[RMDB]
RNA sequence: GGGAACGACUCGAGUAGAGUCGAAAAUAACAUCUGCUUUUUGUGCAUUAUUUAAAUGUGGUAAUGCAUCAAUUGCUCUUGCAGCAUCUGUUUUAGAUUGUACUAAUUUUUCAUCACCAUUUAAUGCAGCACACUUAGAUUUCGAUCUAAGUGUGCUAAAAGAAACAACAACAACAAC
Reactivity to DMS in 0.01 (KOAc 150mM, MgCl2 10mM, bicine 150mM(pH8.5), 24C), signal-to-noise 2, nucleotides 027 to 126: u010a090a160c060a010u000c010u010g010c010u000u000u000u000u010g040u000g010c020a000u000u000a010u000u000u020a050a130a110u000g040u000g030g000u000a010a000u000g000c020a010u000c230a020a020u000u010g020c020u020c060u000u010g030c150a060g030c080a040u000c060u000g020u010u000u000u010a030g000a040u010u020g030u000a060c090u060a010a070u000u000u010u020u000c030a060u000c050a110c040c060a080u010u000u010a070a040u010g020c160
Reactivity to 2A3 in 0.01 (KOAc 150mM, MgCl2 10mM, bicine 150mM(pH8.5), 24C), signal-to-noise 1, nucleotides 027 to 126: u060a000a000c010a040u010c010u000g020c010u070u180u010u090u080g020u000g000c010a010u040u060a050u030u130u200a170a290a170u230g010u110g040g000u000a000a000u030g000c020a000u070c010a010a030u030u090g020c030u010c010u070u110g030c010a030g030c000a080u000c030u010g160u000u050u090u100a030g010a040u000u130g000u060a070c030u010a020a240u060u060u050u100u110c030a060u020c040a050c170c030a030u020u150u130a090a040u100g080c050

This 177-nucleotide RNA was probed chemically with DMS and 2A3. It was measured as part of the RMDB library OK2TRN.